RNA sequence: GGGAACGACUCGAGUAGAGUCGAAAAUAUUAGGUCCACAUGGUUGUAUCUCUACCAUAUUGCUUAAACAAGUAACACACGCCGUACAUAAACCAUCUUCAGGUUCAAGAUAGUAAUCAUUAGGACACGUUUUACCAAAUGAUGUAUAUACUAGGCAGAAUUAGAGGUACUUCGGUACCUCUAAUUCAAAAGAAACAACAACAACAAC
Reactivity to 2A3 in 0.01 (KOAc 150mM, MgCl2 10mM, bicine 150mM(pH8.5), 24C), signal-to-noise 4, nucleotides 027 to 156: u270a090u070u130a070g060g000u030c030c010a030c040a080u040g000g030u050u030g040u090a150u090c100u000c020u070a070c020c030a080u070a060u150u100g020c040u070u170a080a070a060c080a130a000g060u180a200a000c050a010c010a010c130g050c050c020g030u090a050c030a070u180a050a020a030c010c020a060u070c040u150u100c070a040g060g050u040u060c020a030a030g000a050u030a020g080u100a020a080u030c000a020u010u050a050g000g020a020c050a030c170g070u070u060u110u140a060c010c020a040a040a020u070g020a010u020g090u020a050u020a010u010a160c030u060a040g100g000c000a000
Reactivity to DMS in 0.01 (KOAc 150mM, MgCl2 10mM, bicine 150mM(pH8.5), 24C), signal-to-noise 3, nucleotides 027 to 156: u020a100u000u010a070g030g010u000c000c020a110c110a120u000g000g020u010u000g020u010a080u000c050u000c050u000a090c040c020a100u000a140u000u000g020c040u000u000a060a130a090c110a090a070g000u000a070a100c050a070c050a100c080g010c050c030g030u010a080c040a090u000a080a070a050c040c010a060u000c010u000u000c050a090g010g020u000u010c040a070a090g000a090u000a020g020u000a060a070u010c020a060u000u010a130g020g010a060c070a090c110g000u010u000u000u000a070c010c030a080a080a090u020g030a050u000g000u010a070u000a080u000a060c050u000a050g060g000c050a230